[RMDB]
RNA sequence: GGGAACGACUCGAGUAGAGUCGAAAAUUACCGCCCAGGAUGGGGUGCAGCGUUCCUGCAAUAUCCAGGGCACCUAGGUGCAGCCUUGUAGUUUUAGUGGACUUUAGGCUAAAGAAUUUCACUCGCAAAAAUCUUUAAGGGUUCGCCCUUAAAGAAACUUGAUCUUGAUGUUCGCAUCAAGAUCAAGAAAAGAAACAACAACAACAAC
Reactivity to 2A3 in 0.01 (KOAc 150mM, MgCl2 10mM, bicine 150mM(pH8.5), 24C), signal-to-noise 1, nucleotides 027 to 156: u060u020a030c010c010g000c040c020c000a000g060g000a010u060g070g040g030g120u010g000c030a010g010c090g080u120u130c030c000u020g000c000a010a020u070a000u240c020c010a000g000g030g010c000a020c000c040u070a100g090g000u030g050c040a010g050c000c000u040u070g110u190a050g010u040u120u020u060a040g030u100g090g000a000c000u080u040u020a010g000g040c000u120a120a110a030g010a010a110u060u150u230c030a040c030u020c030g040c070a050a010a020a100a250u000c000u010u010u020a010a000g030g000g000u020u060c140g090c010c010c080u000u000a000a000a000g010a000a000a000